[RMDB]
RNA sequence: GGGAACGACUCGAGUAGAGUCGAAAACGGACGGGAUUUUAGCCGGGUUGCACGUUUACCCAUUUCGUGCUGGGUCCUGGACCCAUUUAAGAUUAUAGAAAUAUUAUCGAUUUCUUUACCGUCCGGACGUAUUAGGUAUGUUCGCAUACCUAAUACGAAAAGAAACAACAACAACAAC
Reactivity to 2A3 in 0.01 (KOAc 150mM, MgCl2 10mM, bicine 150mM(pH8.5), 24C), signal-to-noise 4, nucleotides 027 to 126: c000g000g010a010c010g000g000g070a100u020u080u050u260a050g030c050c040g010g020g010u070u100g020c020a000c030g010u030u090u210a150c020c010c020a030u060u110u080c020g000u010g010c010u030g090g040g030u000c020c100u050g070g030a040c020c000c000a010u050u050u020a050a020g000a030u050u090a070u160a120g010a030a040a030u100a040u180u190a100u130c020g010a020u010u080u050c030u050u120u080a080c010c000g020u010c000c010g000g010a010
Reactivity to DMS in 0.01 (KOAc 150mM, MgCl2 10mM, bicine 150mM(pH8.5), 24C), signal-to-noise 5, nucleotides 027 to 126: c010g010g000a010c000g000g000g000a060u000u000u000u010a040g010c190c090g000g010g010u000u000g010c010a010c030g010u010u000u000a090c040c020c030a140u000u010u000c070g020u010g010c100u000g010g000g020u010c030c080u010g010g000a050c010c010c010a050u000u010u000a030a070g000a030u000u000a120u000a030g000a050a030a050u000a040u010u010a120u020c070g000a080u000u000u000c010u000u000u010a230c000c000g000u000c000c000g010g000a120
The data come from the RNA Mapping Database (RMDB), library OK2TRN.
Chemical mapping of a 177-nucleotide RNA with 2A3 and DMS.
2A3 adducts were read by reverse transcription with SuperScript II with manganese.
For 2A3, 4,146 sequencing reads were counted.
The RNA was probed in 150 mM KOAc, 10 mM MgCl2 and 150 mM bicine (pH 8.5) at 24 C.